[RMDB]
RNA sequence: GGGAACGACUCGAGUAGAGUCGAAAAGUCGGUAUAAAACUAGGUGGUGGUUUAUCAUGAUAUCAAUCAUUUUAGUCAUGAUUGGCGGCGGUUUUGGCGCAAUUGCUAGAAGUGCCAUUACUGAUUACCGUACGUAUCAUUUCGAUGAUACGUACGGAAAAGAAACAACAACAACAAC
Reactivity to 2A3 in 0.01 (KOAc 150mM, MgCl2 10mM, bicine 150mM(pH8.5), 24C), signal-to-noise 3, nucleotides 027 to 126: g020u030c030g030g010u080a070u100a150a150a030a040c090u070a040g040g000u020g010g070u020g000g020u040u040u090a030u050c020a020u030g050a010u040a030u140c070a070a040u080c060a130u060u060u150u170a070g020u040c020a020u030g040a030u020u020g050g000c000g020g010c020g000g030u040u020u030u040g020g000c000g030c060a080a100u100u140g010c050u070a070g010a220a020g090u010g040c000c000a010u020u030a050c020u020g040a060u010u100a080
Reactivity to DMS in 0.01 (KOAc 150mM, MgCl2 10mM, bicine 150mM(pH8.5), 24C), signal-to-noise 3, nucleotides 027 to 126: g020u000c050g020g000u000a050u010a050a070a080a030c070u000a050g000g040u000g010g010u000g000g000u000u000u000a050u000c080a040u010g020a060u010a110u000c170a050a050u010c130a060u000u000u010u010a180g000u000c080a080u000g010a030u000u000g010g020c080g000g020c030g010g000u000u000u000u010g000g000c010g020c040a060a090u020u010g030c130u020a080g000a090a120g010u000g020c010c020a030u000u000a020c040u000g010a090u010u020a110

Description
An RNA of 177 nucleotides, treated with 2A3 and DMS and read out base by base.